[RMDB]
RNA sequence: GGGAACGACUCGAGUAGAGUCGAAAAGGGCGAUUCGUCGCCCGAGCAGCGUACUACCUUACUUUUGACGAAGAUGUGGUGGGAGUCCCAAAUAGGACGCGAAACCACCAUAAUCUUCGAUAAGUAAGGUAUCGCCCGCAAUACUAUUCGUAGUAAACAUUGUUGCACAAUUCGUUGUGCAACAAUGAAAAGAAACAACAACAACAAC
Reactivity to 2A3 in 0.01 (KOAc 150mM, MgCl2 10mM, bicine 150mM(pH8.5), 24C), signal-to-noise 5, nucleotides 027 to 156: g000g000g010c010g010a020u060u150c270g020u020c000g150c000c000c000g010a010g000c050a010g000c010g030u050a100c050u000a000c050c000u020u010a010c000u080u050u090u120g260a160c030g000a010a000g010a010u000g010u000g000g000u000g000g030g010a050g000u020c030c030c030a110a200a040u300a050g010g000a000c030g050c070g180a130a020a000c000c010a000c010c000a010u090a060a220u010c000u000u010c000g000a000u000a000a000g000u000a000a000g000g010u000a000u000c000g000c000c010c020g000c040a060a120u070a140c040u060a060u150u160c170g110u130a060g040u100a120a070a090
Reactivity to DMS in 0.01 (KOAc 150mM, MgCl2 10mM, bicine 150mM(pH8.5), 24C), signal-to-noise 3, nucleotides 027 to 156: g020g090g090c000g020a050u000u000c260g000u000c000g030c020c000c010g000a010g050c050a120g000c030g020u000a100c140u000a040c010c000u000u000a000c020u000u000u000u000g020a300c200g010a040a000g020a030u010g030u000g000g020u000g000g010g010a200g000u000c000c000c040a030a110a180u000a060g020g010a040c010g000c100g010a130a160a260c010c010a020c000c010a030u000a010a050u000c000u000u000c000g000a040u000a000a020g000u000a020a020g020g020u000a000u010c030g010c030c040c010g000c060a140a120u000a060c010u000a070u000u010c080g000u000a060g000u010a060a110a300